[RMDB]
RNA sequence: GGGAACGACUCGAGUAGAGUCGAAAAGCGCCCCUUUUCGAAGGGGCGCACUGGAAAUAAAGCCGAAAGGCUACGCAUUCCUUAUUUGGCGAAAGCCUGCCACUAUUGAGAUCUUCGGAUCUCAAAACGUAGGCAAAUACUUCGGUAUUUGCCUACGAAAAGAAACAACAACAACAAC
Reactivity to 2A3 in 0.01 (KOAc 150mM, MgCl2 10mM, bicine 150mM(pH8.5), 24C), signal-to-noise 1, nucleotides 027 to 126: g000c010g000c000c000c010c000u040u070u020u090c230g120a000a010g050g000g000g000c000g020c000a000c000u000g020g090a010a040a080u120a110a150a020g000c000c010g010a000a020a070g000g020c020u020a010c060g030c000a080u060u040c000c000u100u160a210u100u110u120g010g000c030g030a030a010a050g100c000c010u020g060c030c010a080c040u040a200u130u070g000a010g000a010u010c020u040u050c170g070g000a010u000c010u000c030a000a000a000a000
An RNA of 177 nucleotides, treated with 2A3 and read out base by base. For 2A3, 1,047 sequencing reads were counted. High 2A3 reactivity points to a flexible backbone, as in loops and unpaired stretches. The RNA was probed in 150 mM KOAc, 10 mM MgCl2 and 150 mM bicine (pH 8.5) at 24 C.